[RMDB]
RNA sequence: GGGAACGACUCGAGUAGAGUCGAAAAGAUCAAUUAUGAUUGCAAUGCAAUAUGUCAAGGCAGACAUAUCUAGCUGUCGCCUUAGCUAGAGAUAGCCGAUUUAUUGCUUUCAUAAGAACGGCAAGAAAUCCUAUAGCACGUUCGCGUGCUAUAGGAUAAAAGAAACAACAACAACAAC
Reactivity to 2A3 in 0.01 (KOAc 150mM, MgCl2 10mM, bicine 150mM(pH8.5), 24C), signal-to-noise 2, nucleotides 027 to 126: g030a110u140c050a040a090u050u000a010u050g030a000u000u030g020c040a000a040u050g050c010a040a070u070a050u190g080u080c060a080a060g020g000c050a030g030a090c020a030u090a040u040c050u060a020g040c000u030g070u140c070g060c020c070u030u050a020g000c000u000a010g000a010g000a060u050a020g000c010c010g010a010u010u080u010a010u000u010g000c000u040u000u020c000a010u000a030a000g040a090a030c020g070g000c040a050a000g060a120a170
Reactivity to DMS in 0.01 (KOAc 150mM, MgCl2 10mM, bicine 150mM(pH8.5), 24C), signal-to-noise 4, nucleotides 027 to 126: g010a100u000c080a100a100u000u000a010u000g010a020u010u000g000c020a050a010u020g010c190a070a060u000a030u000g010u010c140a080a120g010g020c050a130g040a040c080a030u000a090u000c100u010a040g010c070u000g010u000c100g020c100c060u000u000a040g010c010u000a020g010a090g010a140u000a060g010c020c080g000a070u000u000u010a040u000u000g000c000u000u010u000c010a000u020a010a040g010a080a080c200g000g000c100a080a110g000a080a080